[RMDB]
RNA sequence: GGGAACGACUCGAGUAGAGUCGAAAAACCAUCCUAUUCGUAGGAUGGUGCACCAUUGCCGAUUGUAUAUAAUACCGCAGGCGGUAAAGCGGUUCAAAUAAGGAACUUGUCAGUUCGCUGACAAGAACAGAAAUCCUAUCUUCGGAUAGGAUUUCUGAAAAGAAACAACAACAACAAC
Reactivity to 2A3 in 0.01 (KOAc 150mM, MgCl2 10mM, bicine 150mM(pH8.5), 24C), signal-to-noise 1, nucleotides 027 to 126: a020c000c000a010u000c000c000u070a050u070u090c260g060u060a000g010g000a000u000g050g000u000g000c000a030c000c040a040u050u220g050c010c010g130a160u210u050g110u070a060u000a010u050a290a220u080a090c000c000g000c020a010g070g040c050g000g000u120a070a070a010g020c000g060g000u040u150c100a110a000a110u160a200a030g120g010a070a060c000u000u020g010u000c000a010g010u010u120c140g050c080u000g000a000c000a020a000g030a010a000
Reactivity to DMS in 0.01 (KOAc 150mM, MgCl2 10mM, bicine 150mM(pH8.5), 24C), signal-to-noise 2, nucleotides 027 to 126: a020c020c000a020u000c000c000u000a020u000u020c160g050u010a000g000g000a010u000g010g000u000g010c120a170c030c000a150u000u000g000c020c020g000a160u000u000g000u000a070u000a110u000a130a110u020a040c050c030g010c030a070g000g030c010g010g000u000a030a020a090g010c030g010g000u010u020c200a050a060a100u010a090a130g010g010a100a110c000u000u000g000u000c000a000g010u010u010c210g000c000u000g000a000c000a010a010g000a070a120